[RMDB]
RNA sequence: GGGAACGACUCGAGUAGAGUCGAAAAUGGGACGAACAUGGAAAAACCAUAUAUGUUGAUAGACUGUGCACAUUUACAUAUAGAGCUAGUUUUCAAUGGUUUCAUGAUACAGAAGUUCAUUGACUGCGCCAUCUAAUAUUUUCGAAUAUUAGAUGGCAAAAGAAACAACAACAACAAC
Reactivity to 2A3 in 0.01 (KOAc 150mM, MgCl2 10mM, bicine 150mM(pH8.5), 24C), signal-to-noise 7, nucleotides 027 to 126: u060g030g000g040a010c030g020a120a020c030a040u030g030g030a120a050a010a020a010c030c030a020u080a010u010a010u150g100u070u040g020a040u050a080g040a020c030u050g080u120g220c040a010c020a100u130u140u170a110c050a040u230a010u100a110g050a010g060c030u040a020g030u030u000u030u060c020a030a020u030g000g010u010u030u040c010a010u040g080a050u060a180c050a050g110a140a030g070u050u080c020a040u050u100g060a050c030u050g020c060
Reactivity to DMS in 0.01 (KOAc 150mM, MgCl2 10mM, bicine 150mM(pH8.5), 24C), signal-to-noise 9, nucleotides 027 to 126: u000g010g010g010a040c040g010a110a180c060a050u000g010g000a070a080a060a080a090c030c030a100u000a080u000a050u010g010u000u000g000a030u000a060g020a070c060u000g020u000g020c050a110c090a070u000u000u010a050c100a050u010a050u000a080g000a100g010c070u000a040g010u000u010u000u000c020a050a030u000g000g000u000u000u010c010a030u000g010a110u010a100c170a110g000a080a110g010u000u000c030a050u010u000g010a140c090u000g000c300